Chemical mapping of a 177-nucleotide RNA with 2A3. 2A3 adducts were read by reverse transcription with SuperScript II with manganese. The data come from the RNA Mapping Database (RMDB), library OK1LIB. Conditions: 150 mM KOAc, 10 mM MgCl2 and 150 mM bicine (pH 8.5), 24 C.

RNA sequence: GGGAACGACUCGAGUAGAGUCGAAAACACUGCCACCGGCUCUGCAUUCAGCGUAACAUCAUUUGCAGGGAAGAAUACGAGCUCAUGUUACUCUCAUGCCAAUGGAGAAGAUAUUGUAUUAUGUGACGGCAUCGUACCCUUUCGAGGGUACGAUGCCAAAAGAAACAACAACAACAAC
Reactivity to 2A3 in 0.01 (KOAc 150mM, MgCl2 10mM, bicine 150mM(pH8.5), 24C), signal-to-noise 1, nucleotides 027 to 126: c100a000c000u010g050c030c000a200c000c000g050g000c000u000c040u000g090c000a010u060u110c040a090g000c000g220u200a010a130c000a190u060c030a130u000u000u030g130c030a060g000g010g110a000a130g000a100a090u190a120c070g010a000g050c000u040c060a000u000g050u000u130a150c000u000c000u020c000a000u110g120c000c000a060a030u120g100g000a060g000a050a000g010a040u080a100u000u180g010u000a000u070u080a150u240g160u100g160a030c110